[RMDB]
RNA sequence: GGGAACGACUCGAGUAGAGUCGAAAAUCCUAAUCGUUCGCGAUUAGGAAAAUAAGGAAACCUUCGUGGUGGCGCGACUAAAUGAGUGCUCGCCCUCAUAAAAAACUCAGCUCUUCGGAGCUGAGAACAUCAUUAUCAAGUUCGCUUGAUAAUGAUGAAAAGAAACAACAACAACAAC
Reactivity to 2A3 in 0.01 (KOAc 150mM, MgCl2 10mM, bicine 150mM(pH8.5), 24C), signal-to-noise 7, nucleotides 027 to 126: u000c000c000u000a000a000u010c000g020u050u040c230g000c010g100a010u000u000a000g000g000a020a060a000a050u130a030a030g120g020a080a070a080c020c000u090u120c130g080u080g030g020u040g010g000c030g000c020g040a040c020u110a110a230a270u230g070a090g070u070g090c030u020c020g000c000c020c000u010c010a050u200a050a170a020a020a020a030c000u000c000a000g010c000u000c010u030u120c210g100g010a000g000c000u000g000a000g000a000a000
Reactivity to DMS in 0.01 (KOAc 150mM, MgCl2 10mM, bicine 150mM(pH8.5), 24C), signal-to-noise 5, nucleotides 027 to 126: u000c000c000u000a000a000u000c010g020u000u020c220g020c010g000a010u000u000a000g000g000a020a020a040a060u010a110a110g020g010a120a120a110c020c020u010u010c110g010u000g000g020u010g010g000c050g000c110g000a070c040u000a070a100a110u000g020a100g020u000g010c080u000c040g010c010c000c040u010c040a040u020a000a050a080a100a060a090c000u000c000a010g000c000u000c000u000u010c170g010g010a010g000c000u000g000a010g000a030a110
Description: The data come from the RNA Mapping Database (RMDB), library M2PK50. Structure probing data (2A3 and DMS) for a 177-nucleotide construct. DMS adducts were read by reverse transcription with MarathonRT. The DMS profile rests on 5,785 reads. For 2A3 the reverse transcriptase was SuperScript II with manganese.